[RMDB]
RNA sequence: GGGAACGACUCGAGUAGAGUCGAAAAGUUAUGGAAAACGUCUUAGCUACCACUACAACAACAAUGCUGGACGGUGAUGGUUCGACUUACUCGAAACCAUCACGUAGAGGUAGUCGUUCCCAUUCAAGGUACCAAUCCUUUUCGAAGGAUUGGUACCAAAAGAAACAACAACAACAAC
Reactivity to DMS in 0.01 (KOAc 150mM, MgCl2 10mM, bicine 150mM(pH8.5), 24C), signal-to-noise 1, nucleotides 027 to 126: g020u000u020a100u000g030g000a160a110a160a210c000g000u000c000u000u020a090g060c000u000a100c090c050a140c100u000a020c090a090a020c170a090a020c160a080a120u030g010c000u000g020g030a070c080g020g000u000g000a020u000g000g020u000u000c000g000a020c160u000u000a050c090u050c010g000a040a050a020c000c020a030u000c000a010c140g000u010a020g020a080g000g020u040a090g000u000c080g050u000u000c000c000c000a040u000u000c060a020a120
Reactivity to 2A3 in 0.01 (KOAc 150mM, MgCl2 10mM, bicine 150mM(pH8.5), 24C), signal-to-noise 3, nucleotides 027 to 126: g070u050u050a070u200g180g050a020a100a040a080c010g040u000c020u220u240a060g020c030u070a080c050c040a080c120u230a080c030a110a000c010a030a010c010a040a210u180g020c030u030g040g030a030c000g000g030u010g020a030u040g040g030u010u000c000g000a020c050u080u100a030c020u060c010g000a080a020a020c020c000a060u010c010a030c040g010u080a020g000a030g030g020u030a010g020u020c010g000u000u000c000c010c010a000u060u100c020a010a000

Chemical mapping of a 177-nucleotide RNA with DMS and 2A3. Values are in units of 0.01, from 0 to 300, in steps of 10. Conditions: 150 mM KOAc, 10 mM MgCl2 and 150 mM bicine (pH 8.5), 24 C. The DMS profile rests on 813 reads. For 2A3 the reverse transcriptase was SuperScript II with manganese. DMS adducts were read by reverse transcription with MarathonRT.